[RMDB]
RNA sequence: GGGAACGACUCGAGUAGAGUCGAAAAAAGGCGUGAAUGGUGCAACAGACUCUGGCCAUAGACAUGUACAUUAAAGAUGGCUUUCCAGAUGGAUCUCCUCCUCGCCAUCCUUAUAGGACCCUGAUAGGGUUAGAAAUGGAGAUGUACCCCAGAGCUAGCUGGGGUACUAGUUCGCUAGUACCCCAGCAAAAGAAACAACAACAACAAC
Reactivity to 2A3 in 0.01 (KOAc 150mM, MgCl2 10mM, bicine 150mM(pH8.5), 24C), signal-to-noise 3, nucleotides 027 to 156: a000a000g100g010c060g000u110g080a130a040u120g010g000u070g050c100a160a020c020a040g080a150c010u000c000u010g030g020c050c030a090u090a040g070a020c020a020u110g010u070a020c020a060u080u160a110a020a030g040a010u020g010g000c000u120u070u050c060c020a040g030a140u110g030g060a050u060c010u010c020c000u030c010c020u000c020g000c010c000a010u000c010c010u070u090a070u080a070g130g000a020c010c000c000u010g030a120u190a140g000g010g000u010u010a020g020a020a050a040u100g010g000a030g010a000u020g010u040a040c000c010c020c060a020g050a000g030c010u290a010
Reactivity to DMS in 0.01 (KOAc 150mM, MgCl2 10mM, bicine 150mM(pH8.5), 24C), signal-to-noise 3, nucleotides 027 to 156: a090a010g000g030c020g010u000g020a090a050u010g010g030u000g000c020a080a110c050a090g020a090c010u000c020u000g020g050c060c010a120u000a060g010a130c050a060u000g010u000a090c070a120u000u000a060a090a110g020a050u000g010g020c020u000u020u010c050c030a060g010a120u020g010g010a110u000c080u000c040c030u000c010c010u000c030g010c020c000a060u000c000c010u000u010a120u000a160g010g000a040c010c010c020u000g010a220u000a100g010g030g000u000u000a040g020a080a130a060u000g020g000a060g010a060u000g020u000a090c070c040c010c020a060g000a050g030c040u000a160
Structure probing data (2A3 and DMS) for a 207-nucleotide construct. The reactions ran in a buffer of 150 mM KOAc, 10 mM MgCl2 and 150 mM bicine (pH 8.5), at 24 C. The data come from the RNA Mapping Database (RMDB), library OK3TST. DMS adducts were read by reverse transcription with MarathonRT. Reactivities are rounded to 0.1 and cut off at 0 and 3.